[RMDB]
RNA sequence: GGGAACGACUCGAGUAGAGUCGAAAAAAGACAGUCCCUUUUGUUAAGAUAAUAAGGCUGAAGGCUGCUGAAGAUUCAGUGUUUACGAUGACUGGGCACGAGAUUGUCGCUCUGUCUCGUCACACUGUAGAAUUCUAGAGUUCGCUCUAGAAUUCUAAAAAGAAACAACAACAACAAC
Reactivity to DMS in 0.01 (KOAc 150mM, MgCl2 10mM, bicine 150mM(pH8.5), 24C), signal-to-noise 6, nucleotides 027 to 126: a090a060g010a120c060a040g000u000c250c010c020u000u000u000u010g000u000u000a110a160g010a130u010a090a070u000a070a150g000g010c250u010g000a080a040g000g010c050u000g010c070u000g000a080a100g000a120u000u000c020a010g000u000g010u000u010u010a010c010g000a030u000g010a010c010u000g010g000g020c030a040c010g010a200g010a170u010u000g010u000c170g000c010u000c000u000g000u000c000u000c010g020u000c300a030c010a000c010u000g010
Reactivity to 2A3 in 0.01 (KOAc 150mM, MgCl2 10mM, bicine 150mM(pH8.5), 24C), signal-to-noise 2, nucleotides 027 to 126: a020a000g120a040c010a010g040u070c000c000c000u000u020u020u020g010u000u100a080a030g020a120u080a200a090u050a160a120g080g000c010u040g030a050a000g120g000c030u020g050c020u050g100a100a030g020a130u130u130c020a020g030u000g040u030u060u050a000c000g010a030u230g000a030c000u010g000g010g020c010a010c020g100a150g050a300u090u300g040u050c110g000c010u000c010u020g010u000c000u010c000g000u030c010a010c000a000c000u010g060